[RMDB]
The record gives the reactivity of an RNA of 207 nucleotides to 2A3. Reactivities are given for positions 27 through 156.

RNA sequence: GGGAACGACUCGAGUAGAGUCGAAAAUGCUGAGUACAGUCCUAGGAGUUUCAAUCCUGAAUCUUGGACAGAAAAGGUACACCAAAACCACAUAUUGGUGGGACGGACUCCAAUCCUCUGAUGAUUUCGCUCUCAUCGUAAAUGCACCGAAUCAUGACCCCCUGUCCUUUUUCGAAAGGACAGGGGGAAAAGAAACAACAACAACAAC
Reactivity to 2A3 in 0.01 (KOAc 150mM, MgCl2 10mM, bicine 150mM(pH8.5), 24C), signal-to-noise 1, nucleotides 027 to 156: u070g010c000u010g010a000g050u070a050c080a020g000u060c000c000u050a010g060g040a090g010u160u160u130c070a080a080u020c050c050u080g000a040a050u030c050u190u140g000g000a020c020a050g080a000a060a000a060g000g020u080a090c070a050c020c020a000a200a100a000c050c050a030c060a190u130a100u160u240g090g010u010g010g020g000a000c090g020g020a000c010u000c050c020a000a070u080c000c050u060c160u080g020a020u030g000a000u000u000u060c030g000c030u000c000u000c000a000u000c030g080u070a000a120a080u050g040c040a060c080c000g050a050a010u180c120a050u270g050a120
Overview
Conditions: 150 mM KOAc, 10 mM MgCl2 and 150 mM bicine (pH 8.5), 24 C. Source: RMDB library OK3TST, as collected in RNAgym. 2A3 adducts were read by reverse transcription with SuperScript II with manganese. For 2A3, 385 sequencing reads were counted.